[RMDB]
RNA sequence: GGGAACGACUCGAGUAGAGUCGAAAAAUGGGUCGGGCGGUGUCGAUUCACCCGCUGGCCGUGGUGCUGGCCAUUGCCGCUGGCGGUGUGCUUGCCGGAGUCGUCGGCGCCCUGUUGGCCGUCCCGACAGUGAUUCCGGAUUCGUCCGGAAUCACUGAAAAGAAACAACAACAACAAC
Reactivity to DMS in 0.01 (KOAc 150mM, MgCl2 10mM, bicine 150mM(pH8.5), 24C), signal-to-noise 1, nucleotides 027 to 126: a120u030g020g000g000u000c050g000g020g010c000g000g000u000g010u000c040g020a020u020u000c030a090c030c000c000g000c020u000g010g000c000c200g030u010g000g010u000g000c030u060g000g030c050c050a000u010u000g050c040c160g000c010u020g000g000c000g020g020u040g020u030g000c150u020u000g010c030c020g000g030a040g000u010c060g000u010c000g000g000c000g020c000c000c030u000g050u040u010g010g020c060c040g020u010c020c000c000g040a150
Reactivity to 2A3 in 0.01 (KOAc 150mM, MgCl2 10mM, bicine 150mM(pH8.5), 24C), signal-to-noise 3, nucleotides 027 to 126: a000u200g030g020g000u020c020g040g010g000c070g120g280u030g000u030c010g000a010u040u050c010a030c000c000c010g000c010u020g000g000c000c000g030u070g000g020u100g050c090u110g150g000c050c000a040u060u210g060c090c060g000c000u020g000g000c010g060g010u200g020u050g080c050u110u160g040c040c020g020g000a030g010u060c050g000u000c000g010g040c000g010c000c000c010u060g060u030u060g010g010c020c010g030u030c000c010c000g000a000